Overview
Source: RMDB libraries RFM100 and RFMREP, as collected in RNAgym. Structure probing data (2A3 and DMS) for a 177-nucleotide construct. Conditions: 150 mM KOAc, 10 mM MgCl2 and 150 mM bicine (pH 8.5), 24 C. DMS adducts were read by reverse transcription with MarathonRT.
RNA sequence: GGGAACGACUCGAGUAGAGUCGAAAAGAUUAGGUAGAUGGUGGGGUAACGGCCCACCAUGCCGAUAAUCGGUACAGGUUGUGAGAGCAAGAGCCUGGAGACGGUAUCUGAGACAAGAUACCGGGCCAAUCUAAGUGCUAUUCGUAGCACUUAGAUUAAAAGAAACAACAACAACAAC
Reactivity to 2A3 in 0.01 (KOAc 150mM, MgCl2 10mM, bicine 150mM(pH8.5), 24C), signal-to-noise 8, nucleotides 027 to 126: g020a010u050u060a030g000g030u020a030g030a130u010g000g010u000g010g000g000g000u000a030a000c010g070g000c000c000c000a000c000c000a000u000g010c000c000g000a020u120a020a030u030c010g000g010u060a030c020a040g020g040u070u060g110u130g110a130g010a010g050c040a110a050g020a020g130c010c010u040g010g020a040g040a020c010g000g000u000a000u000c010u020g060a050g040a110c100a110a060g000a000u000a000c000c000g010g010g000c020c020
Reactivity to DMS in 0.01 (KOAc 150mM, MgCl2 10mM, bicine 150mM(pH8.5), 24C), signal-to-noise 9, nucleotides 027 to 126: g010a020u000u000a090g000g010u000a120g000a050u000g000g010u000g000g000g000g010u010a110a130c300g000g000c000c000c000a010c000c000a000u000g010c000c000g000a130u010a030a010u000c010g010g000u020a080c080a040g000g010u000u000g010u010g010a140g010a150g010c090a080a080g010a120g000c030c010u000g000g010a100g010a130c000g000g000u000a000u000c000u000g010a230g010a150c250a110a050g000a010u000a000c000c000g000g000g000c050c060